[RMDB]
RNA sequence: GGGAACGACUCGAGUAGAGUCGAAAAGAUAUGGAAUGUACUACCCACCCUCGUGUUCGGAAACGAACACGAGGAGGUACCGCUUCCUAAGUCAAAAGCGUUACACGGCUUCGGCCGUGUAACGCAACAACAUGCAUGGGUUCGCCCAUGCAUGUUGAAAAGAAACAACAACAACAAC
Reactivity to 2A3 in 0.01 (KOAc 150mM, MgCl2 10mM, bicine 150mM(pH8.5), 24C), signal-to-noise 1, nucleotides 027 to 126: g030a050u190a120u250g010g020a030a050u300g010u000a020c020u090a110c010c050c040a090c030c010c010u010c000g000u010g020u020u000c020g010g030a050a110a070c020g000a030a000c000a000c010g000a000g000g000a000g000g000u000a000c000c020g010c040u020u010c010c020u050a120a040g110u070c040a050a020a090a070g010c020g040u000u030a050c000a020c040g020g000c000u170u240c300g150g050c000c000g000u000g000u010a000a000c030g010c010a000a000
Reactivity to DMS in 0.01 (KOAc 150mM, MgCl2 10mM, bicine 150mM(pH8.5), 24C), signal-to-noise 2, nucleotides 027 to 126: g000a120u010a210u010g000g000a130a010u000g000u010a030c080u020a060c040c080c090a300c130c000c000u020c000g000u000g000u000u010c000g020g000a050a090a150c010g020a000a000c000a020c000g000a000g000g030a000g010g020u010a010c040c140g010c060u010u000c000c000u010a040a150g010u000c100a080a080a040a070g000c000g030u010u000a020c030a030c000g000g000c030u000u000c250g050g000c050c000g000u000g000u020a000a000c000g020c010a000a040

Record summary
Source: RMDB library TTRDEL, as collected in RNAgym. An RNA of 177 nucleotides, treated with 2A3 and DMS and read out base by base. 2A3 adducts were read by reverse transcription with SuperScript II with manganese. DMS adducts were read by reverse transcription with MarathonRT. Reactivities are rounded to 0.1 and cut off at 0 and 3. Reactivities are given for positions 27 through 126. The reactions ran in a buffer of 150 mM KOAc, 10 mM MgCl2 and 150 mM bicine (pH 8.5), at 24 C.